[RMDB]
RNA sequence: GGGAACGACUCGAGUAGAGUCGAAAAAUAAGUCCUUUCGAGGACUUAUAAUGCUGCCCAAAGAGGACCUGGGGGUGUCUGGGCUGCUAAACUCAUCACCCGUGGCUUUGGGGUUCGCCCCAAAGAAUCUUAAUCAUCGUUUCGACGAUGAUUAAGAAAAAGAAACAACAACAACAAC
Reactivity to DMS in 0.01 (KOAc 150mM, MgCl2 10mM, bicine 150mM(pH8.5), 24C), signal-to-noise 3, nucleotides 027 to 126: a020u000a010a000g000u000c000c010u000u000u020c190g030a010g000g000a010c000u000u000a000u000a080a090u010g000c080u000g020c010c000c020a060a090a150g020a150g020g000a050c080c060u010g000g000g010g000g020u000g000u010c110u010g000g000g020c030u000g010c100u000a040a120a100c040u000c030a050u010c060a100c010c010c010g000u000g010g000c000u000u000u000g000g000g010g030u000u010c180g010c010c000c000c020a000a020a010g000a110a080
Reactivity to 2A3 in 0.01 (KOAc 150mM, MgCl2 10mM, bicine 150mM(pH8.5), 24C), signal-to-noise 2, nucleotides 027 to 126: a000u030a010a000g010u000c010c000u020u000u060c200g090a030g010g000a000c000u010u010a000u000a010a060u070g000c040u020g000c020c000c000a100a150a010g220a050g060g000a020c010c110u150g000g070g010g070g010u030g000u010c060u050g060g000g000c010u020g030c000u030a070a100a090c060u030c030a070u040c040a090c030c030c000g080u050g080g010c000u030u000u000g000g000g000g000u000u030c170g100c000c000c000c020a000a000a010g000a020a010
An RNA of 177 nucleotides, treated with DMS and 2A3 and read out base by base. The DMS profile rests on 2,676 reads. High 2A3 reactivity points to a flexible backbone, as in loops and unpaired stretches. It was measured as part of the RMDB library M2PK50. The reactions ran in a buffer of 150 mM KOAc, 10 mM MgCl2 and 150 mM bicine (pH 8.5), at 24 C.